Chemical mapping of a 177-nucleotide RNA with DMS and 2A3. It was measured as part of the RMDB library OK1LIB. For 2A3, 613 sequencing reads were counted. For DMS the reverse transcriptase was MarathonRT. The RNA was probed in 150 mM KOAc, 10 mM MgCl2 and 150 mM bicine (pH 8.5) at 24 C. For 2A3 the reverse transcriptase was SuperScript II with manganese.
[RMDB]
RNA sequence: GGGAACGACUCGAGUAGAGUCGAAAAUCUUUGUUCUAUUCAGUACUCGUGUUCGGAUUGAUGGCCGUGAAAUCUUGUAUGGCAUGAAAUUUCCUGGUGUUAUUGGUACGAAGGAAAUGGGGAUGUGGACCUAAUCGGCAUUCGUGCCGAUUAGGUCAAAAGAAACAACAACAACAAC
Reactivity to DMS in 0.01 (KOAc 150mM, MgCl2 10mM, bicine 150mM(pH8.5), 24C), signal-to-noise 1, nucleotides 027 to 126: u000c120u060u000u000g000u000u000c140u000a020u010u020c030a110g000u020a180c020u000c160g030u000g020u070u000c010g000g000a110u040u000g000a020u000g060g000c010c000g000u000g000a010a050a010u020c110u000u110g000u000a060u040g020g000c020a010u050g000a020a050a090u020u020u000c070c010u000g020g070u040g000u020u010a120u010u050g000g000u000a000c110g040a170a050g000g020a010a000a000u000g010g000g000g000a060u000g020u000g000
Reactivity to 2A3 in 0.01 (KOAc 150mM, MgCl2 10mM, bicine 150mM(pH8.5), 24C), signal-to-noise 2, nucleotides 027 to 126: u030c000u160u040u230g180u020u000c000u020a010u000u000c000a070g030u040a020c000u000c020g050u070g090u040u060c040g180g000a040u080u080g000a040u100g100g000c000c000g140u140g000a000a000a150u100c040u080u090g030u280a080u130g110g020c000a060u060g080a050a090a060u080u020u000c000c000u000g040g030u050g110u080u090a300u220u110g050g010u060a090c020g030a010a000g020g080a050a100a090u080g070g000g040g000a000u030g060u160g270